[RMDB]
RNA sequence: GGGAACGACUCGAGUAGAGUCGAAAAUUGAUAGGUGGCGCUUUGCAACCGUCUGAUAUUUAUACUGUUAGGGUUCGUGAACAUUGGAGACGUAAAAGGAGGCCAACUGCUCAAACUGGAAAUUCUGCUGUAACCCCACGACGUAGAAGACGGAGAAAACACUGUAGCUUUUCGAAGCUACAGUGUUAAAAGAAACAACAACAACAAC
Reactivity to DMS in 0.01 (KOAc 150mM, MgCl2 10mM, bicine 150mM(pH8.5), 24C), signal-to-noise 1, nucleotides 027 to 156: u000u000g000a230u000a080g030g050u020g000g000c000g000c140u000u030u000g020c030a070a150c060c010g020u000c030u000g020a220u020a070u000u010u000a140u000a120c040u050g000u000u000a150g010g020g030u000u010c100g000u020g000a040a090c100a150u000u010g000g000a060g010a100c070g030u000a060a050a070a140g000g010a150g000g050c010c000a010a090c100u000g000c040u010c050a070a030a120c090u000g040g000a100a140a070u000u000c060u020g020c050u000g020u010a060a110c010c020c010c050a010c060g010a080c080g040u000a110g010a040a130g000a050c030g000g010a130g000a090a120
Reactivity to 2A3 in 0.01 (KOAc 150mM, MgCl2 10mM, bicine 150mM(pH8.5), 24C), signal-to-noise 2, nucleotides 027 to 156: u090u050g010a060u070a170g000g080u010g040g030c040g030c080u070u070u180g040c040a040a050c020c000g010u020c000u010g030a020u020a060u140u190u080a110u030a080c020u060g030u050u080a090g010g000g000u010u040c030g000u050g050a060a060c000a050u020u060g050g020a000g010a010c050g040u070a060a000a000a150g070g000a020g000g000c010c030a030a040c030u060g020c050u010c030a080a130a090c010u040g040g050a000a110a090u090u070c030u070g060c000u060g010u090a060a040c000c000c000c060a060c030g010a020c020g010u040a000g030a110a000g010a010c010g000g030a010g040a050a110
An RNA of 207 nucleotides, treated with DMS and 2A3 and read out base by base. Reactivities are given for positions 27 through 156. The data come from the RNA Mapping Database (RMDB), library OK3TST. Conditions: 150 mM KOAc, 10 mM MgCl2 and 150 mM bicine (pH 8.5), 24 C. The DMS profile rests on 1,728 reads.